The record gives the reactivity of an RNA of 177 nucleotides to DMS and 2A3. DMS (dimethyl sulfate) methylates the pairing face of unpaired adenines and cytosines.
RNA sequence: GGGAACGACUCGAGUAGAGUCGAAAAACUAUCCGGCUACGGCCGGAUAGAUUGAUGUAUGCGCAUAUGGGUGGACGAAAUUUUUCGGCCCUUACUCUUAAAUGAGUAGUGCAUAUUAAGGUCAGAACUUCGUAGGUAGAUUCGUCUACCUACGAAGAAAAGAAACAACAACAACAAC
Reactivity to DMS in 0.01 (KOAc 150mM, MgCl2 10mM, bicine 150mM(pH8.5), 24C), signal-to-noise 4, nucleotides 027 to 126: a130c010u000a000u000c000c000g000g010c000u000a070c220g030g010c000c010g010g000a000u000a000g000a060u000u000g010a160u020g020u000a000u000g000c000g020c020a120u020a040u030g010g020g070u020g000g000a080c020g000a000a040a300u020u010u010u000u000c000g000g000c000c010c000u000u000a000c010u000c000u000u010a080a120a060u010g010a000g010u000a020g010u000g000c010a000u010a000u000u020a100a140g000g010u010c020a110g000a090a210
Reactivity to 2A3 in 0.01 (KOAc 150mM, MgCl2 10mM, bicine 150mM(pH8.5), 24C), signal-to-noise 7, nucleotides 027 to 126: a000c000u010a000u000c000c000g000g000c000u040a080c240g110g000c000c000g000g000a000u000a000g010a000u000u120g030a020u080g010u000a000u010g000c010g000c000a050u080a100u300g040g020g010u220g300g050a030c030g060a090a110a150u230u240u020u020u010c010g050g000c010c000c000u000u010a000c000u000c000u000u170a160a260a250u230g000a000g000u020a020g010u000g000c000a000u010a020u040u120a060a030g080g000u070c020a020g020a120a070